[RMDB]
RNA sequence: GGGAACGACUCGAGUAGAGUCGAAAAAUACGCGUCCGUGUUAGGCUUAUAGAGGGAGUAGUCGUCGACGAGCAGGAAGUAGUGCUUGGCAUGCUCCCAAUAAUGCUUAGAUCUAAGGCUGACCCUCCGGCUGGUCGUAUUUCGAUACGACCAGCCGAAAAGAAACAACAACAACAAC
Reactivity to 2A3 in 0.01 (KOAc 150mM, MgCl2 10mM, bicine 150mM(pH8.5), 24C), signal-to-noise 1, nucleotides 027 to 126: a050u210a050c000g000c000g050u010c000c010g030u060g040u100u150a050g010g010c050u090u150a150u150a120g050a070g040g060g010a080g050u030a070g000u080c200g000u000c100g030a290c140g030a000g000c000a000g080g140a300a000g000u260a000g000u010g000c040u080u000g080g000c100a000u000g000c000u020c000c000c000a030a030u190a030a040u150g000c000u090u060a050g000a070u070c000u030a000a090g020g010c000u000g000a020c010c000c010u030c030
The record gives the reactivity of an RNA of 177 nucleotides to 2A3. The data come from the RNA Mapping Database (RMDB), library OK1LIB. For 2A3 the reverse transcriptase was SuperScript II with manganese. The reactions ran in a buffer of 150 mM KOAc, 10 mM MgCl2 and 150 mM bicine (pH 8.5), at 24 C.